[RMDB]
RNA sequence: GGGAACGACUCGAGUAGAGUCGAAAAUUACGGACUGUCGAAAGCAGUGUUUGAUUCCAAUUCCGGCGGAUACAGGUGAUAUUUUAGUUGACUGUUCAGGAGGGAAACAGCACUUCCUAGAAAGCAAAAUCAUCGACUCUUUCGAGAGUCGAUGAUUAAAAGAAACAACAACAACAAC
Reactivity to 2A3 in 0.01 (KOAc 150mM, MgCl2 10mM, bicine 150mM(pH8.5), 24C), signal-to-noise 2, nucleotides 027 to 126: u030u020a030c070g020g100a070c010u050g010u140c010g050a090a000a000g000c010a000g060u000g070u110u220u090g040a030u000u080c000c000a050a030u080u030c060c000g050g030c040g100g010a010u100a150c020a040g000g050u010g160a050u070a100u220u170u110u140a130g100u020u210g200a130c000u030g020u000u060c020a030g020g030a020g050g000g000a070a000a000c000a000g060c030a000c000u000u000c000c000u040a040g080a140a020a000g110c030a030a030
Reactivity to DMS in 0.01 (KOAc 150mM, MgCl2 10mM, bicine 150mM(pH8.5), 24C), signal-to-noise 1, nucleotides 027 to 126: u040u010a160c000g030g000a060c040u000g040u000c000g020a170a130a120g000c070a000g000u010g010u000u000u020g030a070u000u020c010c020a080a130u050u000c000c000g000g000c230g000g000a030u020a040c130a020g000g000u020g010a080u000a030u040u020u020u000a150g000u000u020g020a020c050u000g020u010u000c000a090g000g000a040g010g040g020a010a000a120c090a040g000c020a020c020u000u000c000c000u000a130g000a100a050a030g020c040a050a040